[RMDB]
RNA sequence: GGGAACGACUCGAGUAGAGUCGAAAACAGAUCGUGUGAUCAUCAGUACGUGGCCGAUAGUGGAUCAUCGAUCAGGCCUGGCCUCGGCCCGGCGCGUGUGAUCACAUGCGCCAGCGCGAUCGCGCCGAGUUUUCCUAUUAUUCGUAAUAGGAAAACUAAAAGAAACAACAACAACAAC
Reactivity to DMS in 0.01 (KOAc 150mM, MgCl2 10mM, bicine 150mM(pH8.5), 24C), signal-to-noise 9, nucleotides 027 to 126: c110a130g010a050u000c010g020u010g010u000g000a020u000c020a080u000c090a110g010u010a060c070g020u010g020g010c010c010g010a070u010a090g010u010g010g000a040u000c020a080u000c140g000a040u000c050a100g010g000c020c040u000g010g010c040c050u000c050g000g000c010c020c070g010g010c010g010c130g000u010g010u000g000a090u010c100a040c010a020u000g010c060g010c050c030a060g010c040g020c040g000a070u010c110g010c130g010c020c090g000
Reactivity to 2A3 in 0.01 (KOAc 150mM, MgCl2 10mM, bicine 150mM(pH8.5), 24C), signal-to-noise 9, nucleotides 027 to 126: c040a020g040a100u070c010g010u030g010u020g090a020u030c020a010u060c040a040g100u180a130c050g060u190g050g000c020c010g060a090u100a130g210u180g130g020a050u040c030a080u110c110g040a030u030c020a010g030g040c010c060u070g050g020c000c020u020c020g020g000c000c020c010g020g000c030g000c040g020u120g010u020g050a130u140c090a000c000a020u020g000c010g010c000c020a040g000c040g000c010g040a080u150c080g000c030g000c020c020g030

This 177-nucleotide RNA was probed chemically with DMS and 2A3. Source: RMDB library OK2TRN, as collected in RNAgym.